An RNA of 177 nucleotides, treated with 2A3 and read out base by base.
For 2A3 the reverse transcriptase was SuperScript II with manganese.
The reactions ran in a buffer of 150 mM KOAc, 10 mM MgCl2 and 150 mM bicine (pH 8.5), at 24 C.
RNA sequence: GGGAACGACUCGAGUAGAGUCGAAAAUUUUCGUGCGUGUUCCCGGUGGCGUUGAGGGGCUUGUUCGCAAGCAGCAUCUGGUUGAGAAUCGGGAUGGGGAUCCGGGUGAAGCGCUAAGGAAAUACGCAGCAUAUGCCGCUUUCGAGCGGCAUAUGCUAAAAGAAACAACAACAACAAC
Reactivity to 2A3 in 0.01 (KOAc 150mM, MgCl2 10mM, bicine 150mM(pH8.5), 24C), signal-to-noise 1, nucleotides 027 to 126: u010u000u010u000c020g010u000g000c000g000u000g030u000u060c000c000c000g000g080u030g000g000c070g000u050u190g140a260g050g010g050g060c030u050u090g000u130u120c110g000c210a060a050g000c010a000g010c000a000u050c000u060g220g100u130u290g000a110g040a140a020u150c040g010g020g020a060u050g110g000g020g000a120u130c130c000g030g000g000u130g110a060a000g020c000g000c010u000a020a020g060g010a090a040a040u050a000c000g000c020